[RMDB]
RNA sequence: GGGAACGACUCGAGUAGAGUCGAAAAAAGUAAAUCGAUGCCGAGUUCGUGCACAUCGAUCGGAACGAGACCAUACGCUUGUACUGCAUCUGUAUGAAAAUACACAUCGUGGUCAUGAAGCAAUUGACUACCCGUAGGUAUUCGUACCUACGGGUAGAAAAGAAACAACAACAACAAC
Reactivity to 2A3 in 0.01 (KOAc 150mM, MgCl2 10mM, bicine 150mM(pH8.5), 24C), signal-to-noise 5, nucleotides 027 to 126: a000a010g120u100a040a030a020u040c030g010a020u100g030c020c020g050a080g120u180u190c060g020u140g050c100a050c030a150u050c020g010a020u020c020g040g010a070a050c020g000a010g050a070c020c030a040u080a140c080g000c020u030u060g050u100a020c010u010g000c000a030u030c030u020g010u020a010u020g090a050a050a010a000u030a010c010a000c000a030u080c120g000u010g010g010u030c030a040u140g080a040a010g010c030a040a140u140u080g040a050
Reactivity to DMS in 0.01 (KOAc 150mM, MgCl2 10mM, bicine 150mM(pH8.5), 24C), signal-to-noise 6, nucleotides 027 to 126: a070a070g010u010a120a090a030u000c010g020a040u010g010c050c020g010a200g020u010u010c100g010u000g020c160a140c130a060u000c010g000a020u000c040g000g010a090a070c070g000a100g000a180c080c020a110u000a060c210g000c030u000u000g020u000a010c020u000g010c020a040u000c140u000g010u000a010u000g010a090a050a080a020u000a020c010a020c060a020u000c130g020u000g000g000u000c100a040u010g020a050a040g010c060a090a110u000u000g010a290
The record gives the reactivity of an RNA of 177 nucleotides to 2A3 and DMS. The RNA was probed in 150 mM KOAc, 10 mM MgCl2 and 150 mM bicine (pH 8.5) at 24 C. The DMS profile rests on 5,764 reads. It was measured as part of the RMDB library OK2TST.